Notes: Structure probing data (2A3 and DMS) for a 177-nucleotide construct. For 2A3 the reverse transcriptase was SuperScript II with manganese. As a SHAPE reagent, 2A3 marks flexible, mostly unpaired nucleotides at the ribose 2'-OH. For DMS, 12,753 sequencing reads were counted. The RNA was probed in 150 mM KOAc, 10 mM MgCl2 and 150 mM bicine (pH 8.5) at 24 C.
[RMDB]
RNA sequence: GGGAACGACUCGAGUAGAGUCGAAAAGAUAUGGAGUCCAGGGAGAACUGGGUCGGAAACGACCCUGUUCGAAGAACUGGCUCCUAAGUCAAAGGAAGAGCUUAGUGUUCGCACUAAGCUCUUCCAACACAUUCAUUAUGUUCGCAUAAUGAAUGUGAAAAGAAACAACAACAACAAC
Reactivity to 2A3 in 0.01 (KOAc 150mM, MgCl2 10mM, bicine 150mM(pH8.5), 24C), signal-to-noise 2, nucleotides 027 to 126: g010a000u030a010u050g000g020a000g030u150c020c000a020g010g010g000a070g010a010a000c020u030g000g020g010u000c010g000g000a010a010a000c000g000a000c000c020c000u000g000u000u000c010g030a070a010g000a000a000c000u000g000g000c010u000c000c000u000a010a000g000u000c040a130a110a060g000g000a000a010g000a010g010c000u000u000a000g000u030g080u110u190c300g010c070a000c010u010a000a000g000c000u000c000u000u000c000c000a010a000
Reactivity to DMS in 0.01 (KOAc 150mM, MgCl2 10mM, bicine 150mM(pH8.5), 24C), signal-to-noise 5, nucleotides 027 to 126: g000a020u000a070u010g000g000a020g000u010c010c010a010g000g000g000a050g010a010a010c000u010g000g000g020u000c000g010g010a010a020a040c010g010a010c000c000c000u000g010u000u000c010g000a110a160g000a080a270c010u000g000g000c010u000c000c000u000a000a060g000u000c010a110a120a160g000g000a010a010g010a020g010c000u000u000a010g010u000g000u000u010c230g020c000a010c000u000a000a000g000c000u000c000u000u000c000c000a050a120